The record gives the reactivity of an RNA of 177 nucleotides to 2A3 and DMS.
For 2A3, 116,818 sequencing reads were counted.

[RMDB]
RNA sequence: GGGAACGACUCGAGUAGAGUCGAAAAGCUCUGCGAGACAGGUCGAACAACAAAGAGAGAUCGAAAAUCUUAGAGGAGAGAACGAAUCUGUCGACUUCACUAGGACAUUGUCGAUCAGAGGUCCAAAGAGGAUUGAUGGGUUCGCCUAUCGAUCCUCAAAAGAAACAACAACAACAAC
Reactivity to 2A3 in 0.01 (KOAc 150mM, MgCl2 10mM, bicine 150mM(pH8.5), 24C), signal-to-noise 9, nucleotides 027 to 126: g020c000u000c000u010g010c020g010a040g010a030c030a030g010g000u010c010g040a050a030c040a040a010c030a020a290a010g120a010g010a000g000a020u010c020g060a040a030a020a060u000c010u010u020a020g010a030g050g010a010g010a010g030a060a030c020g020a050a130u120c070u130g070u040c020g080a160c000u020u010c010a020c040u010a010g000g030a010c030a140u080u130g060u030c010g000a010u020c010a000g020a010g040g040u000c010c000a020a050a040
Reactivity to DMS in 0.01 (KOAc 150mM, MgCl2 10mM, bicine 150mM(pH8.5), 24C), signal-to-noise 9, nucleotides 027 to 126: g010c010u000c000u010g000c020g000a250g000a050c180a080g000g000u000c000g010a210a240c070a080a110c250a060a110a090g010a080g010a260g000a010u010c000g010a050a050a110a220u000c010u000u000a020g000a070g010g000a010g000a120g000a130a030c020g010a080a100u050c060u040g000u000c000g000a260c010u000u000c020a090c020u000a020g000g000a030c140a090u020u020g010u000c010g000a120u000c010a050g000a050g010g000u010c020c020a030a100a100